[RMDB]
RNA sequence: GGGAACGACUCGAGUAGAGUCGAAAAUGGCCAUGCUUCGGCAUGGCCACUUGCGUAGGUCGCAAAUUUUUUUAGCUACGCUUAAUAAAAAUUUGCGAUAUAAGUUGGGGUUGUUCGCAACCCCAAAUAACGGAAAAGGUUUCGACCUUUUCCGUUAAAAAGAAACAACAACAACAAC
Reactivity to DMS in 0.01 (KOAc 150mM, MgCl2 10mM, bicine 150mM(pH8.5), 24C), signal-to-noise 1, nucleotides 027 to 126: u010g000g020c000c000a010u000g010c010u000u000c170g000g040c000a000u000g010g010c010c000a000c030u000u000g000c150g010u010a110g010g010u000c020g010c000a000a000a000u000u000u000u000u000u000u000a010g010c010u000a120c290g000c010u000u000a010a040u020a010a020a010a010a000u000u000u000g010c000g010a010u000a090u020a100a120g020u000u000g020g000g010g030u000u000g010u000u010c160g010c030a010a020c020c000c000c010a000a000a030

An RNA of 177 nucleotides, treated with DMS and read out base by base. For DMS the reverse transcriptase was MarathonRT. High DMS reactivity at an A or C suggests that its Watson-Crick edge is free. Reactivities are given for positions 27 through 126. It was measured as part of the RMDB library M2PK50.